[RMDB]
The data come from the RNA Mapping Database (RMDB), library OK2TST. Chemical mapping of a 177-nucleotide RNA with 2A3 and DMS. Reactivities are given for positions 27 through 126. The RNA was probed in 150 mM KOAc, 10 mM MgCl2 and 150 mM bicine (pH 8.5) at 24 C. 2A3 adducts were read by reverse transcription with SuperScript II with manganese. In probing experiments dimethyl sulfate is read out at A N1 and C N3, which are open when not base-paired. For 2A3, 3,206 sequencing reads were counted.
RNA sequence: GGGAACGACUCGAGUAGAGUCGAAAAAGGCGUACCACGGCGUCCAUGCGCUGUUUCGGAUCGAUCUCGAAGAAGCGCUGCUCGAUCUGGCUGUCGGCGUGCAGCGACUCGACCCUCACCUGUCGCAGAUCCUAUAUGCCUUCGGGCAUAUAGGAUCAAAAGAAACAACAACAACAAC
Reactivity to 2A3 in 0.01 (KOAc 150mM, MgCl2 10mM, bicine 150mM(pH8.5), 24C), signal-to-noise 3, nucleotides 027 to 126: a000g040g030c030g020u030a060c030c030a040c030g030g000c010g000u020c080c060a070u160g010c000g000c000u020g080u080u080u040c050g030g030a040u070c030g050a090u020c050u050c050g100a160a070g070a100a020g030c010g000c010u010g000c020u020c020g060a180u050c040u080g080g020c040u060g070u140c010g030g030c030g020u060g010c030a030g030c020g060a080c020u000c030g060a080c000c010c000u020c020a070c030c020u060g040u090c020g000c050a040
Reactivity to DMS in 0.01 (KOAc 150mM, MgCl2 10mM, bicine 150mM(pH8.5), 24C), signal-to-noise 3, nucleotides 027 to 126: a060g000g020c030g030u010a130c030c060a060c040g020g050c020g010u000c050c070a120u000g010c020g030c020u000g020u010u000u000c030g010g000a060u010c100g010a090u010c060u000c000g000a020a040g010a120a080g010c040g000c020u020g000c070u010c030g000a050u000c050u000g000g020c060u000g000u000c080g000g000c050g000u000g000c070a080g010c020g020a070c090u000c030g000a150c070c010c010u000c070a140c060c030u000g010u000c040g000c140a140